Source: RMDB library RFM100, as collected in RNAgym. This 177-nucleotide RNA was probed chemically with 2A3 and DMS. Reactivities are given for positions 27 through 126.
RNA sequence: GGGAACGACUCGAGUAGAGUCGAAAAAUAGAAUUUGCAAAUGUGUCAAGUGCAUCAAGGAGAAGAUAGAGGAGAAACUCGAUUAGGCAAACAAGCCAAAAGGCAAGGAUACCCCUUCUCAAGCAUUAUCCUACUGUUUCUUCGGAAACAGUAGGAUAAAAGAAACAACAACAACAAC
Reactivity to 2A3 in 0.01 (KOAc 150mM, MgCl2 10mM, bicine 150mM(pH8.5), 24C), signal-to-noise 2, nucleotides 027 to 126: a000u180a060g130a070a050u090u060u230g040c080a000a080a190u120g000u000g000u100c030a270a070g030u140g140c000a040u020c030a200a000g080g000a000g000a040a010g070a020u300a020g060a150g050g020a070g080a030a030a030c000u020c000g070a100u010u140a010g000g000c000a000a060a190c010a100a140g000c000c020a020a090a000a020g080g000c060a070a030g090g000a000u080a190c000c000c000c030u000u000c000u010c010a020a120g030c020a010u010u010
Reactivity to DMS in 0.01 (KOAc 150mM, MgCl2 10mM, bicine 150mM(pH8.5), 24C), signal-to-noise 1, nucleotides 027 to 126: a130u110a100g010a180a100u020u040u070g070c010a000a020a160u000g020u060g000u000c020a030a000g000u000g010c010a000u000c120a040a070g070g010a000g000a030a010g000a020u010a150g000a090g000g030a110g000a040a040a010c000u000c030g000a090u000u000a100g030g000c010a150a050a170c270a000a290g000c000c000a040a060a100a090g000g010c000a030a040g000g060a240u060a140c110c000c050c000u000u000c000u000c000a040a070g000c120a060u030u000
The RNA was probed in 150 mM KOAc, 10 mM MgCl2 and 150 mM bicine (pH 8.5) at 24 C.